RNA sequence: GGGAACGACUCGAGUAGAGUCGAAAACACCUGACCCUGCAGGCAUCAAGAAAAAAGAUAGGCGCGGGAGCGAAGAAGUCCUUCAGGGAUCCCCGGGGAAACCCGAAGGAAGUCGAGGACGGGGGCUACAUUUAAACAAGUUCGCUUGUUUAAAUGUAAAAGAAACAACAACAACAAC
Reactivity to DMS in 0.01 (KOAc 150mM, MgCl2 10mM, bicine 150mM(pH8.5), 24C), signal-to-noise 2, nucleotides 027 to 126: c080a150c020c020u000g000a110c030c000c010u020g020c040a030g000g020c090a070u000c050a070a080g020a000a030a150a140a170a070g000a120u000a140g000g000c040g020c080g010g010g020a120g000c040g000a060a100g020a070a110g020u000c000c010u000u000c010a060g000g010g000a150u000c010c020c030c150g000g010g000g000a020a060a160c000c010c030g020a030a080g020g000a030a080g000u000c110g010a060g010g010a050c040g000g000g010g020g020c280u000
Reactivity to 2A3 in 0.01 (KOAc 150mM, MgCl2 10mM, bicine 150mM(pH8.5), 24C), signal-to-noise 1, nucleotides 027 to 126: c060a020c000c000u000g040a030c000c000c020u020g020c020a040g050g000c020a080u090c020a100a170g170a150a180a030a000a020a010g120a110u130a050g070g010c030g020c040g010g090g020a010g030c020g000a050a060g050a100a020g110u000c000c000u030u070c050a010g000g000g020a030u010c000c000c010c020g150g030g010g000a050a070a000c000c000c000g000a040a000g000g030a010a030g050u130c090g050a000g000g070a010c050g000g000g040g000g000c000u000

Structure probing data (DMS and 2A3) for a 177-nucleotide construct. Conditions: 150 mM KOAc, 10 mM MgCl2 and 150 mM bicine (pH 8.5), 24 C. DMS adducts were read by reverse transcription with MarathonRT.